RNA sequence: GGGAACGACUCGAGUAGAGUCGAAAACGGAGAGGCGGUAGCCGCCGUGACCUUGGCCGAAAAAGAGAUCCAACUGCCUGCGGAUAUCACCACGCGUUUCCAAGGCUCGACGCUGGCCUUCCAGGCAGUCCCUAUGAUCCUUCGGGAUCAUAGGGACAAAAGAAACAACAACAACAAC
Reactivity to 2A3 in 0.01 (KOAc 150mM, MgCl2 10mM, bicine 150mM(pH8.5), 24C), signal-to-noise 1, nucleotides 027 to 126: c030g060g010a170g010a140g110g000c030g030g180u200a050g000c050c010g030c010c010g010u010g060a100c000c020u020u050g050g000c000c000g120a100a000a060a020a000g080a010g010a040u020c020c000a020a050c080u060g010c030c050u060g030c080g030g020a020u030a050u130c050a010c010c010a020c010g050c010g020u010u100u070c050c020a090a000g040g000c060u060c050g000a020c020g020c030u020g000g000c000c020u000u000c010c010a030g000g080c010a030
Reactivity to DMS in 0.01 (KOAc 150mM, MgCl2 10mM, bicine 150mM(pH8.5), 24C), signal-to-noise 2, nucleotides 027 to 126: c040g040g000a080g010a130g010g010c010g000g040u000a120g030c010c020g000c030c000g010u000g010a070c010c000u000u010g000g000c130c010g010a050a070a100a100a050g000a110g000a040u000c030c100a130a140c050u010g020c020c010u000g000c150g010g010a040u000a040u010c160a110c020c040a030c160g020c040g000u020u010u000c030c030a080a140g010g010c090u000c090g000a040c050g000c040u000g000g000c020c060u000u000c010c020a080g010g010c070a060

The record gives the reactivity of an RNA of 177 nucleotides to 2A3 and DMS. DMS adducts were read by reverse transcription with MarathonRT. It was measured as part of the RMDB library OK2TST. For 2A3 the reverse transcriptase was SuperScript II with manganese. The RNA was probed in 150 mM KOAc, 10 mM MgCl2 and 150 mM bicine (pH 8.5) at 24 C.